[RMDB]
This 207-nucleotide RNA was probed chemically with 2A3. For 2A3 the reverse transcriptase was SuperScript II with manganese. Conditions: 150 mM KOAc, 10 mM MgCl2 and 150 mM bicine (pH 8.5), 24 C.

RNA sequence: GGGAACGACUCGAGUAGAGUCGAAAAGAAUGUUACCAUUGUGCGACCAAUGGUAACAUGAUUGCCAUCCUUGAGUAUUGACGCUACAAUACUGGAUCAUUAGCGACAAUGAUGAAGGAUGGCAAUGCUAACUACAUGGUCGCAUAUGUGGUUAGGAUGCCAUAGUGGCAUUCGUGCCACUAUGGCAAAAAGAAACAACAACAACAAC
Reactivity to 2A3 in 0.01 (KOAc 150mM, MgCl2 10mM, bicine 150mM(pH8.5), 24C), signal-to-noise 1, nucleotides 027 to 156: g180a010a070u000g000u090u010a000c050c000a000u000u030g040u060g050c080g040a030c030c030a030a040u010g000g000u000a010a010c000a000u020g000a000u000u000g030c000c000a000u000c000c000u040u050g100a040g040u120a020u010u000g060a120c110g060c220u090a020c030a120a020u000a130c070u050g110g110a050u070c000a090u090u020a010g000c000g040a040c000a000a000u010g030a000u080g200a010a000g000g000a000u000g000g000c000a000a000u000g000c000u030a000a220c000u040a000c010a010u040g170g020u130c000g000c040a000u040a030u110g010u010g000g000u070u000a100g030g000a180